RNA sequence: GGGAACGACUCGAGUAGAGUCGAAAAACUCAGGCCACAAAGAUUGUCUGUCGAGCGAUGCCGAACUCUUCGGCUGUCUUUGAUGACCCGGAUUUACAACUAUCUUCAAUCUCUUCUUGUGGGUCAAGUCCCGGUGUAUAUUCGUAUACACCGGGACAAAAGAAACAACAACAACAAC
Reactivity to DMS in 0.01 (KOAc 150mM, MgCl2 10mM, bicine 150mM(pH8.5), 24C), signal-to-noise 2, nucleotides 027 to 126: a050c040u000c020a100g010g020c000c000a080c060a010a070a040g010a070u010u000g010u000c020u010g020u010c080g010a050g000c060g000a100u000g010c110c040g050a060a120c130u000c090u000u000c000g020g000c000u010g000u000c010u000u020u010g050a120u010g000a030c030c040c040g000g010a060u000u010u020a060c170a060a100c140u000a060u020c040u010u020c050a050a120u000c060u000c050u010u010c080u010u000g020u000g000g010g000u000c020a060a100
Reactivity to 2A3 in 0.01 (KOAc 150mM, MgCl2 10mM, bicine 150mM(pH8.5), 24C), signal-to-noise 2, nucleotides 027 to 126: a030c040u010c040a030g010g010c010c000a010c030a050a060a010g020a050u000u100g030u040c070u060g020u030c040g000a020g000c030g030a070u140g080c050c040g010a140a070c060u090c040u270u010c040g000g020c020u000g020u010c030u010u040u160g090a120u050g000a040c000c030c040g010g080a050u080u100u160a090c100a110a010c030u080a090u130c020u070u090c050a060a060u050c010u010c040u170u020c030u120u090g050u090g050g040g020u030c030a030a000
The record gives the reactivity of an RNA of 177 nucleotides to DMS and 2A3.
For 2A3, 1,600 sequencing reads were counted.
Conditions: 150 mM KOAc, 10 mM MgCl2 and 150 mM bicine (pH 8.5), 24 C.
Values cover nucleotides 27 to 126.
Source: RMDB library OK2TRN, as collected in RNAgym.